[RMDB]
RNA sequence: GGGAACGACUCGAGUAGAGUCGAAAACUCGCCGCCCCAGCCCGGGUAAGCCACAGUUCCGACCGAAGGGGACGAGUGGGGAGAAGGGCGCCCCGAGGGGGGUCAUCUGGCAAAGAGAGGAGGAAUUACACGCUCUAGUUCGCUAGAGCGAAAAGAAACAACAACAACAAC
Reactivity to 2A3 in 0.01 (KOAc 150mM, MgCl2 10mM, bicine 150mM(pH8.5), 24C), signal-to-noise 8, nucleotides 027 to 129: c000u000c010g040c020c020g040c000c000c000c010a030g040c010c020c010g010g010g020u050a030a030g030c010c000a050c010a030g020u080u040c020c020g040a060c020c030g030a090a020g010g000g010g010a000c020g010a040g030u080g010g000g010g010a050g020a030a040g020g010g000c020g050c000c010c000c010g030a080g020g020g000g000g000g000u000c000a030u020c020u050g030g000c030a060a070a020g050a000g000a010g010g010a000g000g010a010a010u080u070a070c090a020
Reactivity to DMS in 0.01 (KOAc 150mM, MgCl2 10mM, bicine 150mM(pH8.5), 24C), signal-to-noise 7, nucleotides 027 to 129: c010u000c050g030c060c060g030c010c000c000c000a140g000c070c000c040g040g000g000u030a050a090g030c020c030a000c080a120g000u030u000c020c010g030a050c020c040g020a060a070g030g000g010g030a060c010g020a020g000u030g030g020g010g000a060g000a070a050g020g000g000c110g010c070c030c010c040g000a070g020g000g020g010g000g040u000c030a040u040c010u000g000g000c060a060a040a080g040a050g000a010g040g000a000g020g000a050a060u050u050a100c150a160
Annotation: Chemical mapping of a 170-nucleotide RNA with 2A3 and DMS. High DMS reactivity at an A or C suggests that its Watson-Crick edge is free. DMS adducts were read by reverse transcription with MarathonRT. Reactivities are rounded to 0.1 and cut off at 0 and 3. The reactions ran in a buffer of 150 mM KOAc, 10 mM MgCl2 and 150 mM bicine (pH 8.5), at 24 C. 2A3 adducts were read by reverse transcription with SuperScript II with manganese. It was measured as part of the RMDB library 15KLIB.